Structure probing data (2A3 and DMS) for a 207-nucleotide construct. The DMS profile rests on 7,773 reads. It was measured as part of the RMDB library OK3TST. For 2A3 the reverse transcriptase was SuperScript II with manganese. Values are in units of 0.01, from 0 to 300, in steps of 10.
RNA sequence: GGGAACGACUCGAGUAGAGUCGAAAACAUUUAGACUGGUGAGUGAGUAAGUAGUGAAGACUUGAACCGAUGAAUAUAGACUACCAUUUCAAGAAACUUGACUUUCAAGGAAAGGAGAGGAAUGAAGUAGUUAGAGCUAGGUUUGAUCUCUUAAUGCCAUAGGAAAGAGUUUCGACUCUUUCCUAUGAAAAGAAACAACAACAACAAC
Reactivity to 2A3 in 0.01 (KOAc 150mM, MgCl2 10mM, bicine 150mM(pH8.5), 24C), signal-to-noise 7, nucleotides 027 to 156: c020a020u110u140u160a050g020a060c050u030g020g010u060g050a060g010u040g020a010g020u060a120a060g020u060a030g010u060g080a070a030g030a080c040u060u040g020a020a010c030c030g050a070u100g040a080a010u170a030u080a130g040a020c010u020a020c010c020a030u010u020u040c070a100a070g060a120a090a030c020u010u030g040a030c020u070u210u150c110a110a040g060g010a090a040a010g040g020a060g010a030g010g020a020a020u050g010a110a040g010u030a000g010u030u040a040g000a010g090c020u040a020g060g000u020u040u060g020a030u020c010u000c010u050u140a080a040u210g050c090
Reactivity to DMS in 0.01 (KOAc 150mM, MgCl2 10mM, bicine 150mM(pH8.5), 24C), signal-to-noise 4, nucleotides 027 to 156: c030a130u000u000u010a080g000a120c040u010g000g030u000g010a110g030u000g010a120g020u000a080a140g020u000a070g040u000g010a090a060g030a080c030u000u000g020a070a090c050c040g020a130u000g010a080a090u010a140u010a130g020a100c010u000a050c020c020a080u000u000u000c020a060a160g000a130a050a090c020u000u010g010a200c050u000u010u000c070a080a100g010g000a070a040a080g020g010a180g010a070g000g000a010a060u010g020a070a120g010u000a020g010u000u000a070g010a110g000c050u000a070g030g010u010u000u000g010a110u000c030u000c020u000u000a060a100u000g010c150